Structure probing data (DMS and 2A3) for a 177-nucleotide construct. Source: RMDB library 15KREP, as collected in RNAgym. 2A3 adducts were read by reverse transcription with SuperScript II with manganese. For 2A3, 4,244 sequencing reads were counted.
[RMDB]
RNA sequence: GGGAACGACUCGAGUAGAGUCGAAAAAAUACUUAAUGGUUGCGCUUGGUUUGUAAAACCUAAUCGCACUAGUGUUGUUUCUUUUAAUGAAUGGGCUCUUGCCAACCAAUUCACUGAAUUUGUUGGCCUAAUGUAUGUACUUCGGUACAUACAUUAGAAAAGAAACAACAACAACAAC
Reactivity to DMS in 0.01 (KOAc 150mM, MgCl2 10mM, bicine 150mM(pH8.5), 24C), signal-to-noise 3, nucleotides 027 to 126: a060a060u010a060c080u000u000a130a100u010g020g010u000u000g040c010g010c220u000u000g010g000u010u000u000g020u010a070a050a030a010c010c000u010a040a010u000c010g000c010a030c040u000a070g020u000g000u000u000g000u000u000u000c000u000u000u000u010a030a060u010g010a030a120u010g010g010g010c160u000c030u000u000g010c010c000a010a010c000c050a020a020u000u000c010a170c250u010g000a020a000u000u000u010g020u000u000g000g010c010
Reactivity to 2A3 in 0.01 (KOAc 150mM, MgCl2 10mM, bicine 150mM(pH8.5), 24C), signal-to-noise 5, nucleotides 027 to 126: a000a000u220a050c070u100u100a090a050u270g060g020u080u060g030c000g010c020u030u010g090g070u060u060u120g220u180a140a140a020a020c000c020u020a030a020u010c000g000c010a010c020u020a050g040u010g020u040u010g000u000u000u040c000u020u030u000u030a080a030u170g040a040a030u070g100g100g040c020u010c010u040u030g000c000c000a000a000c000c010a010a010u040u010c170a190c300u160g010a000a000u000u000u000g000u000u010g000g020c030